[RMDB]
RNA sequence: GGGAACGACUCGAGUAGAGUCGAAAAACAAGGUGCCAGUACCGCGUUAACGACUGUCACUUAGAACUGGAUCGCAGUGAAGCCUGCCUGGGGUGGAUCAGCUAAACUUUUACAGGAUCGCGCUUUUCGUCCCGCCCGCUGGGCUGUAAAGCGUUAAGAGAUAGCGUACGUUCGCGUACGCUAUCUCAAAAGAAACAACAACAACAAC
Reactivity to 2A3 in 0.01 (KOAc 150mM, MgCl2 10mM, bicine 150mM(pH8.5), 24C), signal-to-noise 2, nucleotides 027 to 156: a000c060a000a010g010g000u000g010c000c000a000g000u020a080c010c000g030c050g080u070u090a160a010c060g110a060c070u090g020u080c060a070c060u140u120a020g060a110a070c040u020g000g030a070u100c080g020c110a050g010u000g000a020a000g000c000c010u010g050c050c020u030g040g010g000g000u010g020g010a020u030c000a040g030c040u050a000a060a140c050u030u090u150u270a140c040a020g000g060a050u110c040g020c000g000c030u070u040u000u020c030g110u090c010c010c000g050c110c060c030g080c160u140g000g000g020c000u080g000u010a010a010a000g000c010g000u020u020a030a000
The data come from the RNA Mapping Database (RMDB), library RSTRND. Chemical mapping of a 207-nucleotide RNA with 2A3. Reactivities are given for positions 27 through 156. The RNA was probed in 150 mM KOAc, 10 mM MgCl2 and 150 mM bicine (pH 8.5) at 24 C.